Overview:
An RNA of 177 nucleotides, treated with 2A3 and DMS and read out base by base. Source: RMDB library 15KREP, as collected in RNAgym.
RNA sequence: GGGAACGACUCGAGUAGAGUCGAAAACUGGAUAUCCUAAGCUUUUCAUUACUCGUGAAGAGGCUGUAAGGCAAGUUCGAAGCUGGAUAGGCUUCGAUGUUGAGGGUGCUCAUGCUUCCCGUAAUGCCCAAUUUCUUAAGUUCGCUUAAGAAAUUGGAAAAGAAACAACAACAACAAC
Reactivity to 2A3 in 0.01 (KOAc 150mM, MgCl2 10mM, bicine 150mM(pH8.5), 24C), signal-to-noise 4, nucleotides 027 to 126: c020u020g020g020a020u010a020u070c000c000u040a090a030g010c010u030u060u010u010c010a020u030u240a200c030u030c060g060u080g260a180a080g010a060g050g030c020u010g020u060a010a010g030g000c030a060a060g060u020u000c000g000a010a000g000c020u050g080g140a210u140a160g010g020c000u000u000c000g000a010u030g060u040u120g090a020g000g000g010u020g010c000u000c020a020u110g010c010u030u020c000c000c010g010u080a100a060u180g020c020
Reactivity to DMS in 0.01 (KOAc 150mM, MgCl2 10mM, bicine 150mM(pH8.5), 24C), signal-to-noise 5, nucleotides 027 to 126: c090u000g000g010a050u010a030u000c010c000u000a110a130g000c000u000u000u000u000c000a030u000u010a150c080u000c080g010u010g000a100a170g000a020g010g010c230u000g000u000a050a060g000g000c020a150a130g010u000u000c010g010a020a010g020c010u000g000g030a130u010a120g000g000c000u000u000c000g010a000u000g000u010u000g010a060g010g010g020u000g000c030u000c020a020u010g020c080u000u000c000c000c000g010u010a070a090u010g000c260
Conditions: 150 mM KOAc, 10 mM MgCl2 and 150 mM bicine (pH 8.5), 24 C. Values cover nucleotides 27 to 126. For DMS, 6,848 sequencing reads were counted.